This 177-nucleotide RNA was probed chemically with DMS and 2A3. High DMS reactivity at an A or C suggests that its Watson-Crick edge is free. For DMS, 2,925 sequencing reads were counted. The 2A3 profile rests on 1,840 reads. 2A3 is a SHAPE reagent: it acylates the 2'-hydroxyl of flexible nucleotides of all four kinds.
[RMDB]
RNA sequence: GGGAACGACUCGAGUAGAGUCGAAAAUAAAAGGAGGAUGACAAAUAUAGAGAGAUAUCGGUACUCCCACGCGCGUCUCUCAUUGAUAAGAGUGAUAAAAGGGUGAUUAUGUUAUAGCGCGCAAAAAUCAUUUAUAGGAGUUCGCUCCUAUAAAUGAAAAAGAAACAACAACAACAAC
Reactivity to DMS in 0.01 (KOAc 150mM, MgCl2 10mM, bicine 150mM(pH8.5), 24C), signal-to-noise 3, nucleotides 027 to 126: u010a060a090a090a090g010g010a070g010g000a070u000g000a070c060a050a060a100u010a100u000a120g010a040g000a030g000a050u010a050u000c040g010g000u010a140c090u000c010c010c000a100c120g010c030g020c130g000u000c020u000c010u000c010a080u010u010g010a110u010a040a080g000a070g010u000g000a050u010a020a040a060a100g000g010g010u000g010a080u000u000a040u000g010u000u000a040u010a100g010c030g010c030g010c080a020a020a080a060a060
Reactivity to 2A3 in 0.01 (KOAc 150mM, MgCl2 10mM, bicine 150mM(pH8.5), 24C), signal-to-noise 2, nucleotides 027 to 126: u090a030a070a000a020g060g000a010g010g010a040u050g010a040c020a020a170a020u180a040u100a140g030a000g000a000g000a070u000a010u080c010g000g000u050a030c020u010c020c030c000a020c030g100c010g000c020g070u000c000u000c000u020c010a040u040u110g000a000u040a180a100g050a020g090u090g020a050u110a080a110a060a020g050g030g010u080g040a090u020u250a070u090g080u090u060a070u120a160g020c020g000c000g000c060a020a060a020a030a010